[RMDB]
RNA sequence: GGGAACGACUCGAGUAGAGUCGAAAAAAAACAACAAUGGAAGGCAAUGGUUAAAUAAAUAUAAAAGCAACAUGACAAGGCAGUCUAAGAUAAAGUGCCAAAUUGGUGCCAACAGACUUCAGCAGAAUGGAGGUUCUUAUGCUGGGCUGGAGUGAGCCACGCAAUGAUGAUUCGUCAUCAUUGCGUGAAAAGAAACAACAACAACAAC
Reactivity to DMS in 0.01 (KOAc 150mM, MgCl2 10mM, bicine 150mM(pH8.5), 24C), signal-to-noise 1, nucleotides 027 to 156: a000a000a000a000c030a030a040c030a020a030u000g020g050a080a070g050g000c010a050a070u000g000g000u000u020a100a040a060u010a030a030a030u020a050u000a000a010a040a020g000c010a080a080c100a020u010g000a070c000a030a030g000g020c250a050g010u000c070u000a080a050g020a200u000a010a080a010g030u000g040c070c020a020a050a070u000u020g030g040u020g000c000c080a080a100c070a100g010a010c040u000u000c090a040g070c060a050g000a050a010u000g000g010a020g070g000u010u000c030u000u000a140u000g020c000u010g010g050g050c030u000g000g010a080g040u000g000a070g010c180
Reactivity to 2A3 in 0.01 (KOAc 150mM, MgCl2 10mM, bicine 150mM(pH8.5), 24C), signal-to-noise 2, nucleotides 027 to 156: a010a000a000a000c060a030a010c050a040a020u120g010g000a010a000g000g000c000a020a000u060g060g000u070u040a090a160a110u100a020a080a000u110a170u030a010a050a000a010g000c000a000a040c040a070u070g030a020c000a010a000g010g000c010a000g010u000c020u050a050a030g020a060u160a100a120a000g000u010g000c060c000a100a120a210u120u150g020g000u010g000c010c010a030a010c050a040g020a000c000u120u050c120a010g000c000a010g050a100a010u100g050g020a000g000g000u000u010c000u000u020a030u050g040c000u000g000g010g020c000u020g030g000a000g000u010g000a000g040c010

An RNA of 207 nucleotides, treated with DMS and 2A3 and read out base by base. 2A3 adducts were read by reverse transcription with SuperScript II with manganese. Conditions: 150 mM KOAc, 10 mM MgCl2 and 150 mM bicine (pH 8.5), 24 C. Source: RMDB library OK3TST, as collected in RNAgym. Values are in units of 0.01, from 0 to 300, in steps of 10.